[RMDB]
RNA sequence: GGGAACGACUCGAGUAGAGUCGAAAAGAAAGAAAGAAAGUUCAUUGUUUAUCGGAAACUUUAAACUAUAACCAUUCAAACUUUUCCAGAAGUUAGUUUGAAUAGAAAUUAAAAAGACACUUCUGAAUAACCUUAUCAUGCUUCGGCAUGAUAAGAAUCAGGUACACAUGUUCGCAUGUGUACCUGAAAAAGAAACAACAACAACAAC
Reactivity to 2A3 in 0.01 (KOAc 150mM, MgCl2 10mM, bicine 150mM(pH8.5), 24C), signal-to-noise 1, nucleotides 027 to 156: g050a010a060a020g060a010a060a010g060a040a060a020g030u040u040c060a070u040u190g050u100u130u070a110u170c060g020g030a000a000a050c000u030u110u090a050a070a020c020u050a010u110a240a020c030c000a020u010u000c000a010a010a010c010u060u100u080u070c180c000a010g040a020a000g000u000u040a010g010u030u000u030g000a000a020u030a080g030a000a090a000u160u260a070a090a010a000a000g110a000c020a000c000u000u000c000u020g020a050a070u010a030a010c000c000u000u000a000u000c000a020u000g000c000u080u050c100g130g000c000a010u000g000a000u000a000a000g000a040a000

The record gives the reactivity of an RNA of 207 nucleotides to 2A3. Source: RMDB library M2RFPK, as collected in RNAgym. The reactions ran in a buffer of 150 mM KOAc, 10 mM MgCl2 and 150 mM bicine (pH 8.5), at 24 C. Reactivities are given for positions 27 through 156.